An RNA of 177 nucleotides, treated with 2A3 and DMS and read out base by base. High DMS reactivity at an A or C suggests that its Watson-Crick edge is free. DMS adducts were read by reverse transcription with MarathonRT. Conditions: 150 mM KOAc, 10 mM MgCl2 and 150 mM bicine (pH 8.5), 24 C.

RNA sequence: GGGAACGACUCGAGUAGAGUCGAAAACAAUGCCCAUUUAACUGGAAACAGUGUCACUUUUGAAGGAACACAAUGUUAUCAGACAAUUACUUAUGAAGCCAACACAAAGAAGGGCAUGUGUGGUGGAGAUCCAUCUGUUCUUCGGAACAGAUGGAUCAAAAGAAACAACAACAACAAC
Reactivity to 2A3 in 0.01 (KOAc 150mM, MgCl2 10mM, bicine 150mM(pH8.5), 24C), signal-to-noise 2, nucleotides 027 to 126: c060a010a080u120g020c020c000c030a010u070u200u050a090a090c010u030g040g000a060a000a010c010a020g000u030g010u010c050a040c130u030u110u150u290g170a100a020g010g010a100a000c010a000c010a100a160u090g000u000u020a060u070c020a000g090a010c050a090a140u200u090a100c040u100u110a110u300g060a030a010g040c020c000a100a010c010a070c040a040a140a040g100a050a100g020g050g000c070a060u020g010u010g000u000g000g020u010g000g010a050
Reactivity to DMS in 0.01 (KOAc 150mM, MgCl2 10mM, bicine 150mM(pH8.5), 24C), signal-to-noise 2, nucleotides 027 to 126: c090a070a140u000g000c000c000c000a280u020u000u000a020a140c020u000g000g000a110a030a010c010a050g040u000g000u020c210a230c100u000u000u000u010g020a110a040g000g020a210a100c010a030c010a050a110u020g010u000u030a030u000c030a010g000a250c250a050a050u010u000a130c100u000u020a050u000g020a170a150g010c020c020a020a030c040a020c050a050a160a030g000a170a080g010g000g000c000a050u000g020u020g010u010g020g010u000g020g000a180